[RMDB]
RNA sequence: GGGAACGACUCGAGUAGAGUCGAAAAGAGGGCCAUACCCUGCUGAAACUACAUAAAGAGCUUUUGCUGGUGGCAGAACUGUGAACUGGAUGGAUUCUGGGAAUGGCCAGAAAAACAAAUGCCUGUGGUUGUGAGCAGUGCCCACACCCAUGGUCUAGCUCCAGAUUAUAUUCGUAUAAUCUGGAGCAAAAGAAACAACAACAACAAC
Reactivity to DMS in 0.01 (KOAc 150mM, MgCl2 10mM, bicine 150mM(pH8.5), 24C), signal-to-noise 2, nucleotides 027 to 156: g020a130g000g030g060c030c060a110u000a160c000c030c010u000g030c030u020g020a200a080a060c010u000a080c040a110u000a110a170a190g000a130g030c040u020u000u000u000g010c060u010g020g000u020g030g000c030a090g000a020a050c010u010g000u000g000a090a110c110u000g000g010a160u000g030g020a160u000u000c000u010g000g000g000a120a080u010g000g070c020c020a100g000a010a040a130a100a110c060a090a120a070u000g000c130c010u010g030u000g030g020u010u040g010u020g000a000g000c040a250g050u000g000c010c020c010a060c000a010c020c010c020a060u010g020g010u000c050u000a220
Reactivity to 2A3 in 0.01 (KOAc 150mM, MgCl2 10mM, bicine 150mM(pH8.5), 24C), signal-to-noise 3, nucleotides 027 to 156: g050a010g010g030g000c030c010a040u090a090c010c010c000u030g020c020u040g050a030a050a070c060u080a010c040a080u280a120a120a020g070a050g040c030u030u040u110u100g020c040u080g030g100u070g050g020c020a010g020a070a040c030u030g020u020g180a060a090c030u060g040g030a050u050g010g050a040u080u050c030u050g000g000g030a090a020u050g010g030c020c020a030g030a020a070a000a000a010c050a010a110a020u070g030c020c010u050g020u060g020g020u040u040g020u010g010a030g000c100a080g070u040g210c010c010c000a000c010a000c010c010c000a010u090g010g000u010c050u030a020